[RMDB]
RNA sequence: GGGAACGACUCGAGUAGAGUCGAAAAUACGAGCCUGGAUCAACAUUUAAAUCAUAUGGGUUAGCAGCUGCUAUUCAAGAAGGUGCUUUUGAUCCUGAUAAGAAAUAUAAAUCUGGACAUAGAGAUAGCUAAUAGUCUAAUUCGUUAGACUAUUAGCAAAAGAAACAACAACAACAAC
Reactivity to 2A3 in 0.01 (KOAc 150mM, MgCl2 10mM, bicine 150mM(pH8.5), 24C), signal-to-noise 5, nucleotides 027 to 126: u110a020c030g020a020g040c010c030u030g020g000a020u020c020a010a080c010a030u060u080u170a110a150a020u070c020a020u090a110u260g040g030g000u030u050a010g000c010a020g050c010u110g000c010u070a080u180u160c040a050a010g060a020a010g140g010u040g020c000u110u110u050u070g020a030u000c000c000u010g000a000u010a110a110g090a040a100a000u150a010u040a060a170a010u020c020u030g010g010a010c020a030u130a050g100a010g030a060u100a100
Reactivity to DMS in 0.01 (KOAc 150mM, MgCl2 10mM, bicine 150mM(pH8.5), 24C), signal-to-noise 5, nucleotides 027 to 126: u010a110c090g010a120g020c050c020u000g000g020a050u000c050a090a130c160a030u000u010u000a040a120a070u000c040a080u010a090u000g010g010g020u000u000a030g000c030a030g020c030u000g000c030u010a090u010u010c170a060a090g010a040a070g000g000u000g020c030u010u000u010u000g000a040u000c010c000u000g010a050u010a060a140g000a050a030a060u000a060u000a060a090a050u000c010u000g000g000a040c050a070u010a110g000a110g020a110u000a090
An RNA of 177 nucleotides, treated with 2A3 and DMS and read out base by base. DMS adducts were read by reverse transcription with MarathonRT. For 2A3 the reverse transcriptase was SuperScript II with manganese. Source: RMDB library OK2TRN, as collected in RNAgym. The RNA was probed in 150 mM KOAc, 10 mM MgCl2 and 150 mM bicine (pH 8.5) at 24 C.